An RNA of 207 nucleotides, treated with DMS and read out base by base.
For DMS the reverse transcriptase was MarathonRT.
The reactions ran in a buffer of 150 mM KOAc, 10 mM MgCl2 and 150 mM bicine (pH 8.5), at 24 C.
RNA sequence: GGGAACGACUCGAGUAGAGUCGAAAAAAGGGCCGGAAGCCCGAGCAGGGCACCAGGUACGAGCUCGGCAGACGACACCUGGUCUCGAAACGACUACGGCCGGGCCAGCCGGUGUGGGUGACCACGAAGUCCAACGGCGAGAUCGACAGCCUGCGGCUAGCAUUUCUAUAUUCGUAUAGAAAUGCUAAAAAGAAACAACAACAACAAC
Reactivity to DMS in 0.01 (KOAc 150mM, MgCl2 10mM, bicine 150mM(pH8.5), 24C), signal-to-noise 1, nucleotides 027 to 156: a170a190g040g020g000c020c000g000g020a220a240g010c030c030c000g000a060g000c040a070g000g010g000c000a120c030c000a120g000g020u050a100c030g000a180g000c030u000c060g040g000c130a250g000a100c180g040a230c040a070c020c030u000g000g000u000c020u000c070g010a210a190a170c060g010a130c020u000a090c010g000g030c080c000g020g020g000c060c070a260g010c040c010g000g060u010g100u000g000g030g010u010g000a170c020c030a140c040g010a190a210g020u010c000c000a030a160c130g000g000c000g020a090g000a220u000c010g010a090c100a190g000c030c020u000g030c060g040g000c110